[RMDB]
RNA sequence: GGGAACGACUCGAGUAGAGUCGAAAAUUGGCAGCGAGGAGAUUCUUUGAGGAAGAACCAGAAGCCAAAGGACUAGGCUUGGGUCUUGAAAAGUACUUAGAAGUUGCUAUGUGUGACAAUGAGUGGGGAGGAAGUCUAGAAGCUUCAAUGCUGGCAACAGUAAGCAACGAUUCGUCGUUGCUUACUGAAAAGAAACAACAACAACAAC
Reactivity to DMS in 0.01 (KOAc 150mM, MgCl2 10mM, bicine 150mM(pH8.5), 24C), signal-to-noise 2, nucleotides 027 to 156: u000u000g000g030c030a070g020c080g000a130g020g010a080g000a140u010u000c020u020u000u070g020a160g030g030a070a100g010a050a120c030c010a110g030a180a190g010c080c040a030a060a150g010g020a040c050u000a080g000g000c020u000u000g010g000g010u000c000u010u020g000a040a070a080a080g010u000a050c030u010u000a060g010a090a140g020u000u000g030c000u000a030u010g060u020g030u000g020a060c040a030a090u000g010a040g000u000g010g010g010g010a080g000g020a080a060g000u000c040u000a100g000a090a100g020c030u010u000c080a110a090u010g030c000u010g000g020c010a070a130
Reactivity to 2A3 in 0.01 (KOAc 150mM, MgCl2 10mM, bicine 150mM(pH8.5), 24C), signal-to-noise 3, nucleotides 027 to 156: u060u020g020g010c020a010g000c030g040a030g050g020a100g010a120u050u090c040u080u190u150g070a100g070g020a040a010g000a020a000c020c000a020g060a080a000g000c000c000a050a050a000g070g010a050c070u060a050g020g090c000u010u030g030g010g010u050c000u030u040g010a040a020a010a050g090u050a030c040u050u080a060g010a120a040g070u010u010g000c040u050a070u150g130u020g020u030g040a040c030a050a140u110g010a020g040u060g010g010g000g000a010g020g000a060a000g000u000c000u030a050g000a070a020g030c000u100u090c090a070a100u110g000c020u040g030g020c000a040a020
The record gives the reactivity of an RNA of 207 nucleotides to DMS and 2A3. The data come from the RNA Mapping Database (RMDB), library OK3TST. Conditions: 150 mM KOAc, 10 mM MgCl2 and 150 mM bicine (pH 8.5), 24 C. For 2A3 the reverse transcriptase was SuperScript II with manganese.